[RMDB]
RNA sequence: GGGAACGACUCGAGUAGAGUCGAAAACGCUGGGCAACGAAAGUGUCUUGGAUUUAGCGUUCGUUUGACGGACCUGAAGCGCGCACGGGUCCCGAGAACGCUUGUCAGACAUGAGUAGUUGCCUGUGCUGAAGCGCGCACGGCAACCGAAAGGUGCGGAGUCUAUGGGAGUUCGCUCCCAUAGACUCAAAAGAAACAACAACAACAAC
Reactivity to 2A3 in 0.01 (KOAc 150mM, MgCl2 10mM, bicine 150mM(pH8.5), 24C), signal-to-noise 1, nucleotides 027 to 156: c040g020c010u040g000g030g000c000a000a000c000g000a030a000a000g030u000g010u000c040u100u300g160g040a200u290u220u260a000g000c000g000u000u000c010g000u090u170u180g040a020c010g000g000a000c000c000u070g020a230a000g010c000g000c030g000c000a000c010g010g000g020u020c000c000c000g050a060g000a000a000c000g000c010u000u080g050u040c060a040g000a020c000a000u000g000a000g020u000a000g010u000u000g000c000c000u000g000u000g000c000u010g020a050a000g010c020g000c000g020c010a000c000g030g000c030a040a030c000c030g040a050a010a040g000g000u030g020c000g040